Structure probing data (2A3 and DMS) for a 207-nucleotide construct.
For 2A3 the reverse transcriptase was SuperScript II with manganese.
The reactions ran in a buffer of 150 mM KOAc, 10 mM MgCl2 and 150 mM bicine (pH 8.5), at 24 C.
DMS adducts were read by reverse transcription with MarathonRT.
Reactivities are given for positions 27 through 156.
RNA sequence: GGGAACGACUCGAGUAGAGUCGAAAAAGCUAGGAGUAGCUUCUAGGACUAGCUUCUAGGACUGUAGGUGUGUGUCACUGUACCUGGCUAAAUUUAAAAUUUUUUGUAGAGACGGCGUCUUACUAUGUUGGCCAGGCUGGUCUCAGACUCCUGACCAAAUAGUAAAUCGUUUCGACGAUUUACUAUUAAAAGAAACAACAACAACAAC
Reactivity to 2A3 in 0.01 (KOAc 150mM, MgCl2 10mM, bicine 150mM(pH8.5), 24C), signal-to-noise 3, nucleotides 027 to 156: a010g030c020u030a000g000g030a050g030u070a000g040c010u120u060c040u130a120g000g090a150c020u040a070g050c020u060u000c000u040a040g020g020a080c050u050g080u150a060g030g000u040g000u010g000u020g040u060c010a030c040u030g030u110a100c000c000u010g010g000c000u040a030a040a100u170u180u140a090a120a060a140u150u150u100u070u110u170g020u020a040g020a000g000a040c070g170g140c100g020u020c020u020u020a040c010u050a040u150g060u050u040g030g000c000c000a000g000g020c000u040g030g000u000c040u030c050a020g000a060c010u000c020c020u030g010a020c020c000a040
Reactivity to DMS in 0.01 (KOAc 150mM, MgCl2 10mM, bicine 150mM(pH8.5), 24C), signal-to-noise 2, nucleotides 027 to 156: a070g000c010u010a010g020g010a150g050u000a040g030c030u000u000c020u000a130g030g030a100c030u010a080g040c080u000u000c020u000a040g010g010a070c050u000g020u010a030g010g020u000g010u000g020u000g010u000c030a050c050u000g030u000a070c010c020u010g020g010c030u000a000a030a110u000u010u000a040a090a110a110u000u000u000u010u010u010g010u000a120g000a070g010a030c040g010g020c140g010u010c050u000u000a050c040u010a070u000g010u000u000g000g010c000c000a020g010g020c050u010g030g010u010c040u020c080a100g010a070c030u000c010c010u000g010a060c010c010a100